[RMDB]
The record gives the reactivity of an RNA of 177 nucleotides to 2A3 and DMS.
The RNA was probed in 150 mM KOAc, 10 mM MgCl2 and 150 mM bicine (pH 8.5) at 24 C.
For 2A3, 4,843 sequencing reads were counted.
Source: RMDB library M2PK50, as collected in RNAgym.
RNA sequence: GGGAACGACUCGAGUAGAGUCGAAAACGCGAACUGUUCGCAGUUCGCGAAAUAACAUACAACAGCUAACCUACUGCGAUAAGCCCUAGCUAAGUAGGUAAAAAAGAGGAAAGUUCGCUUUCCUCAACAUUAUACGACGGUUCGCCGUCGUAUAAUGAAAAGAAACAACAACAACAAC
Reactivity to 2A3 in 0.01 (KOAc 150mM, MgCl2 10mM, bicine 150mM(pH8.5), 24C), signal-to-noise 3, nucleotides 027 to 126: c010g010c000g010a000a000c010u000g040u060u090c240g040c120a000g010u010u000c010g000c010g000a000a000a010u010a010a010c050a040u300a060c050a160a020c010a090g040c060u110a040a070c000c000u010a000c020u030g000c000g020a010u030a190a040g020c000c000c000u010a010g000c000u000a070a010g000u010a000g010g040u050a010a040a010a000a000a000g010a000g000g050a020a010a020g040u070u170c300g040c250u020u000u000c000c000u000c000a010a000
Reactivity to DMS in 0.01 (KOAc 150mM, MgCl2 10mM, bicine 150mM(pH8.5), 24C), signal-to-noise 5, nucleotides 027 to 126: c020g020c000g010a000a000c010u000g020u010u030c240g040c020a020g000u000u000c000g020c010g000a000a040a090u000a070a090c170a100u000a060c140a040a080c130a080g000c090u010a130a050c000c000u000a010c000u000g030c060g010a090u000a090a140g010c000c000c010u000a240g000c020u000a040a050g000u000a010g000g010u000a000a050a090a050a030a040g000a010g000g000a010a010a010g020u000u020c230g010c010u000u000u000c000c000u010c000a040a120